Source: RMDB library TTRDEL, as collected in RNAgym. Structure probing data (DMS and 2A3) for a 177-nucleotide construct. High 2A3 reactivity points to a flexible backbone, as in loops and unpaired stretches.

[RMDB]
RNA sequence: GGGAACGACUCGAGUAGAGUCGAAAAGAUAUGGAAGAGGGAGCGGCGCCUAGCGCUCCCAUCGGAAACGAUGGAGAGCGGGUCGGCGAAGAACUCUUCCUAAGUCAAACGGAACUUCGGUUCCGAACAAUUCUUAGGUCUUCGGACCUAAGAAUUGAAAAGAAACAACAACAACAAC
Reactivity to DMS in 0.01 (KOAc 150mM, MgCl2 10mM, bicine 150mM(pH8.5), 24C), signal-to-noise 3, nucleotides 027 to 126: g000a030u000a300u000g000g000a030a010g010a010g000g000g030a250g020c220g020g020c040g000c020c000u000a300g010c030g000c000u000c010c000c000a010u010c010g010g010a140a090a110c020g000a000u000g000g010a120g000a000g000c000g030g000g030u000c230g000g020c000g000a030a040g010a300a200c020u000c010u000u000c010c000u000a010a060g000u000c050a070a130a210c020g000g000a020a020c010u000u020c220g020g000u000u000c000c000g000a070a090
Reactivity to 2A3 in 0.01 (KOAc 150mM, MgCl2 10mM, bicine 150mM(pH8.5), 24C), signal-to-noise 2, nucleotides 027 to 126: g010a030u120a010u170g000g010a000a000g010a010g030g070g040a070g130c180g190g050c020g100c010c020u070a110g210c020g000c040u000c000c020c000a000u000c000g010g020a050a070a030c020g000a000u010g010g020a280g000a020g300c050g000g030g050u200c070g000g010c000g000a030a010g000a020a020c000u000c000u000u000c000c000u000a100a020g030u020c040a090a070a100c030g010g000a010a010c010u070u080c200g150g000u000u000c000c000g000a050a010